[RMDB]
RNA sequence: GGGAACGACUCGAGUAGAGUCGAAAAUGUCACCUGUGUGUUUUCUCUGCAUGCCCUCUUCAUUGUUCUGCUGAAGACUGGUCUCUUCAUGUGUGAGGGAGGAGGUUGGGUAUUGAGGGAAAACAGGUAAAUUUUGCAUUUUCGAAUGCAAAAUUUAAAAAGAAACAACAACAACAAC
Reactivity to 2A3 in 0.01 (KOAc 150mM, MgCl2 10mM, bicine 150mM(pH8.5), 24C), signal-to-noise 9, nucleotides 027 to 126: u220g060u090c060a070c100c010u030g020u020g010u000g030u130u000u030u000c010u010c010u040g160c010a010u030g020c010c010c000u030c010u050u020c020a200u050u140g150u300u020c010u020g020c000u010g000a000a000g010a010c090u180g110g070u070c030u010c000u050u010c020a050u270g020u010g040u050g030a030g000g040g010a040g010g020a000g000g000u190u140g040g000g000u040a090u060u160g040a020g000g010g000a010a010a010a010c010a010g000g040
Reactivity to DMS in 0.01 (KOAc 150mM, MgCl2 10mM, bicine 150mM(pH8.5), 24C), signal-to-noise 4, nucleotides 027 to 126: u020g010u010c100a100c020c010u000g020u020g010u010g010u010u000u010u010c000u000c000u000g010c040a030u000g000c000c000c000u000c010u000u000c020a080u000u000g000u020u000c000u000g010c020u010g000a020a010g010a020c050u010g010g000u030c160u000c010u010u000c010a030u030g030u010g000u020g000a040g000g000g000a050g000g000a030g000g000u020u010g000g010g010u000a020u010u010g010a060g000g000g000a040a030a040a020c030a020g010g010

Chemical mapping of a 177-nucleotide RNA with 2A3 and DMS. DMS adducts were read by reverse transcription with MarathonRT. For 2A3 the reverse transcriptase was SuperScript II with manganese. Values cover nucleotides 27 to 126. Values are in units of 0.01, from 0 to 300, in steps of 10.